[RMDB]
RNA sequence: GGGAACGACUCGAGUAGAGUCGAAAAGACGGAAAAGAUCGAACCUAAGAAGAUCAGGAAGUGUGAGCCGAAUCCUAGGGCUCCUAGGAACGCAUCGUCCGAUGCGAAAUAAACACUAACGUCGAAAAUAGGAUAUACGGUUCGCCGUAUAUCCUAUAAAAGAAACAACAACAACAAC
Reactivity to 2A3 in 0.01 (KOAc 150mM, MgCl2 10mM, bicine 150mM(pH8.5), 24C), signal-to-noise 4, nucleotides 027 to 126: g020a000c000g020g050a040a080a060a060g020a010u070c060g000a080a130c040c040u070a110a030g080a040a020g000a080u020c010a030g060g130a090a040g030u030g020u030g060a040g090c030c040g100a020a060u010c000c000u000a000g030g020g050c080u130c060c000u010a000g000g030a030a080c010g000c000a000u000c040g250u130c120c230g000a000u010g020c030g030a040a020a000u090a000a050a000c030a000c040u060a170a010c020g010u020c010g030a120a000a010
Reactivity to DMS in 0.01 (KOAc 150mM, MgCl2 10mM, bicine 150mM(pH8.5), 24C), signal-to-noise 7, nucleotides 027 to 126: g000a020c010g000g010a130a080a110a130g010a020u000c010g000a110a150c150c150u040a070a110g010a130a170g010a010u010c000a110g010g000a110a040g020u010g010u000g020a050g030c080c060g010a100a110u000c010c010u000a060g000g010g010c120u020c010c110u020a030g010g020a080a190c010g010c020a000u000c000g020u070c220c210g010a010u000g000c000g030a030a060a080u010a070a160a030c030a010c000u000a100a150c000g010u000c000g010a050a050a110
Chemical mapping of a 177-nucleotide RNA with 2A3 and DMS.
Conditions: 150 mM KOAc, 10 mM MgCl2 and 150 mM bicine (pH 8.5), 24 C.
Reactivities are given for positions 27 through 126.
DMS adducts were read by reverse transcription with MarathonRT.
For DMS, 13,420 sequencing reads were counted.